Overview
Structure probing data (DMS and 2A3) for a 177-nucleotide construct. The DMS profile rests on 1,421 reads. The RNA was probed in 150 mM KOAc, 10 mM MgCl2 and 150 mM bicine (pH 8.5) at 24 C.
[RMDB]
RNA sequence: GGGAACGACUCGAGUAGAGUCGAAAAGAGUUACGAAAUAAUGUUACUGAAAAGGCUUCCGUACACGCACGGAAAAGUGACGUGCGUCGGAAGCUCAAGACGACGCAUGUUACUGGAAUUUAAGAAAGGGAUUAACAUUCUUCGGAAUGUUAAUCCCAAAAGAAACAACAACAACAAC
Reactivity to DMS in 0.01 (KOAc 150mM, MgCl2 10mM, bicine 150mM(pH8.5), 24C), signal-to-noise 1, nucleotides 027 to 126: g010a010g000u000u000a020c100g000a160a060a110u030a030a000u040g010u020u000a140c080u000g010a060a130a100a150g000g000c180u010u000c000c000g010u020a070c160a070c190g000c070a040c060g010g040a000a040a080a150g000u010g030a020c000g000u000g000c000g020u000c000g000g050a010a000g030c080u020c020a080a000g000a080c050g000a030c010g000c020a010u000g010u000u000a020c030u000g000g020a160a090u000u010u040a120a070g000a030a080a070
Reactivity to 2A3 in 0.01 (KOAc 150mM, MgCl2 10mM, bicine 150mM(pH8.5), 24C), signal-to-noise 2, nucleotides 027 to 126: g050a000g020u000u010a090c080g140a060a060a080u210a090a230u060g060u040u200a080c060u050g010a040a070a100a100g000g000c000u090u000c030c040g080u040a070c010a000c010g000c000a030c010g120g080a060a060a100a000g120u080g070a070c000g000u000g000c000g010u000c030g000g000a090a000g010c000u000c000a050a030g040a010c090g000a000c000g010c040a020u080g040u000u000a000c000u000g010g070a130a130u130u080u220a140a080g080a100a000a110